[RMDB]
An RNA of 170 nucleotides, treated with 2A3 and DMS and read out base by base. 2A3 is a SHAPE reagent: it acylates the 2'-hydroxyl of flexible nucleotides of all four kinds.
RNA sequence: GGGAACGACUCGAGUAGAGUCGAAAACAACUCACAUUUGUGAAGAAUUUUAUUACUGCCAAUCCGGCAUGGAGUAAGGCAGUCUUUAUUUCGCCUUACAAUUCACAGAAUGCUGUGUCUCGUUCAACUACACCUUACUUCGGUAAGGUGAAAAGAAACAACAACAACAAC
Reactivity to 2A3 in 0.01 (KOAc 150mM, MgCl2 10mM, bicine 150mM(pH8.5), 24C), signal-to-noise 9, nucleotides 027 to 129: c030a000a020c010u010c030a010c000a040u020u030u050g010u000g010a010a020g050a070a050u070u110u090u090a160u120u190a080c040u000g000c000c010a100a170u150c100c150g040g000c070a040u140g080g020a080g030u020a030a020g020g000c020a030g050u020c020u080u300u100a270u040u130u090c060g010c000c000u020u020a010c030a040a050u000u000c000a000c000a010g190a130a030u030g050c060u020g070u020g060u050c010u030c090g060u070u040c020a090a070c040u050a030
Reactivity to DMS in 0.01 (KOAc 150mM, MgCl2 10mM, bicine 150mM(pH8.5), 24C), signal-to-noise 9, nucleotides 027 to 129: c160a080a110c060u000c050a000c000a090u010u020u020g020u050g020a000a000g050a100a070u040u020u020u070a050u000u000a120c060u030g000c030c000a090a140u010c170c120g000g080c000a000u060g000g000a140g020u000a010a040g020g030c030a020g040u000c120u070u070u050a120u020u020u030c160g000c030c020u030u040a010c000a050a080u010u000c030a030c030a000g000a050a050u030g020c160u020g000u020g010u030c060u040c230g010u050u010c040a160a060c090u000a090
The reactions ran in a buffer of 150 mM KOAc, 10 mM MgCl2 and 150 mM bicine (pH 8.5), at 24 C.